An RNA of 177 nucleotides, treated with 2A3 and DMS and read out base by base. High DMS reactivity at an A or C suggests that its Watson-Crick edge is free. DMS adducts were read by reverse transcription with MarathonRT.
RNA sequence: GGGAACGACUCGAGUAGAGUCGAAAAUGCACAAUGAUCAUUGCGCACUUCAGCUGUCAUGAAAUCAUUUAGGGAUCGGUUCAAGAAAAUGUAACCAGAGCCAGGAAAUGGUGUGGUCGGAACCACCUGCGAAGGCAAGAUUCGUCUUGCCUUCGCAAAAAGAAACAACAACAACAAC
Reactivity to 2A3 in 0.01 (KOAc 150mM, MgCl2 10mM, bicine 150mM(pH8.5), 24C), signal-to-noise 1, nucleotides 027 to 126: u230g020c060a020c000a070a070u030g020a040u060c000a060u030u130g000c030g000c030a030c030u120u100c050a010g000c050u030g090u120c010a030u080g030a070a100a030u030c050a020u140u100u120a110g000g020g050a060u070c110g010g020u060u040c090a120a040g070a170a070a070a090u230g020u110a060a000c020c000a060g070a000g080c060c000a030g030g080a090a220a000u020g010g010u000g050u080g030g020u060c070g010g010a020a070c040c000a040c040c070
Reactivity to DMS in 0.01 (KOAc 150mM, MgCl2 10mM, bicine 150mM(pH8.5), 24C), signal-to-noise 1, nucleotides 027 to 126: u010g030c030a040c020a000a020u000g000a130u030c110a050u000u010g020c060g010c040a050c120u000u000c100a060g030c030u020g000u010c050a160u000g010a060a060a030u000c020a020u000u010u000a130g020g000g000a080u010c020g000g060u000u000c030a100a080g010a040a040a090a090u060g010u020a060a020c040c000a210g000a040g020c000c000a080g020g010a010a080a130u000g000g030u000g010u010g000g040u000c100g000g010a090a190c060c000a120c150c140